Record summary: Structure probing data (DMS and 2A3) for a 177-nucleotide construct. Conditions: 150 mM KOAc, 10 mM MgCl2 and 150 mM bicine (pH 8.5), 24 C. For 2A3 the reverse transcriptase was SuperScript II with manganese. Reactivities are given for positions 27 through 126. As a SHAPE reagent, 2A3 marks flexible, mostly unpaired nucleotides at the ribose 2'-OH.
[RMDB]
RNA sequence: GGGAACGACUCGAGUAGAGUCGAAAACGACAGAACUUCGGUUCUGUCGAAAUAAAAUCAGCGGUUAAAAAGCUGGCGUUAUAUCCGCUGAACGCCAGCUUAAAAGAUUCGUGUUCGCACGAAUCAACAAUAACCAUUCCUUCGGGAAUGGUUAUUGAAAAGAAACAACAACAACAAC
Reactivity to DMS in 0.01 (KOAc 150mM, MgCl2 10mM, bicine 150mM(pH8.5), 24C), signal-to-noise 4, nucleotides 027 to 126: c020g010a000c000a000g000a000a000c000u010u010c180g040g020u000u000c000u000g010u000c000g000a020a070a080u010a050a070a090a070u000c070a040g010c050g010g010u010u010a070a120a110a040a010g010c000u000g010g000c000g000u000u010a070u000a110u010c040c020g010c050u000g000a010a000c000g000c000c010a010g020c010u000u000a010a060a100a100g000a010u000u000c000g020u000g010u000u010c180g010c000a010c010g010a010a000u000c000a090a130
Reactivity to 2A3 in 0.01 (KOAc 150mM, MgCl2 10mM, bicine 150mM(pH8.5), 24C), signal-to-noise 4, nucleotides 027 to 126: c010g000a000c000a010g010a000a000c010u060u140c220g080g000u010u000c000u000g000u000c000g000a000a000a000u060a000a050a000a060u070c030a010g040c030g070g090u100u150a100a270a080a040a000g020c000u000g020g010c010g000u000u040a150u020a040u120c020c030g000c130u080g030a000a000c010g000c000c000a000g000c000u000u010a000a010a010a010g000a000u000u000c010g000u010g050u040u070c170g050c050a000c000g000a010a000u000c010a000a000